[RMDB]
Background: Structure probing data (2A3 and DMS) for a 177-nucleotide construct.
RNA sequence: GGGAACGACUCGAGUAGAGUCGAAAAGUAGCUGGUUCCCUCCGAAAUUUCCCUCAGGAUAGCAGCAACUUAUUUACGAUAGUUUUAUGAGGUAAAGCGAAUGAUUAGAGGAUUCGGGGAAGAAACUGGGAGAUCUAUUAUUCGUAAUAGAUCUCCCAAAAGAAACAACAACAACAAC
Reactivity to 2A3 in 0.01 (KOAc 150mM, MgCl2 10mM, bicine 150mM(pH8.5), 24C), signal-to-noise 4, nucleotides 027 to 126: g110u080a010g030c030u070g090g020u020u010c000c000c000u010c010c010g020a040a050a040u100u090u050c020c000c000u040c070a030g060g050a030u060a040g030c020a010g010c010a050a040c000u040u070a040u130u110u040a060c120g120a260u120a220g070u000u060u030u050a030u030g030a010g010g060u190a030a040a050g020c000g020a030a090u080g060a140u120u070a060g010a020g050g000a010u030u000c010g000g000g010g010a010a070g040a030a100a000c060u030
Reactivity to DMS in 0.01 (KOAc 150mM, MgCl2 10mM, bicine 150mM(pH8.5), 24C), signal-to-noise 3, nucleotides 027 to 126: g010u010a020g010c060u010g000g020u010u010c000c000c000u030c040c000g000a040a040a090u030u060u050c100c010c000u010c030a190g000g010a030u020a160g010c020a110g000c170a080a080c010u020u000a080u000u020u020a010c050g000a200u080a110g000u010u020u010u000a030u020g000a050g000g000u000a060a230a130g020c000g000a080a060u020g030a140u020u050a120g000a040g000g000a110u000u010c010g000g000g000g000a090a060g010a050a080a040c170u010
The reactions ran in a buffer of 150 mM KOAc, 10 mM MgCl2 and 150 mM bicine (pH 8.5), at 24 C.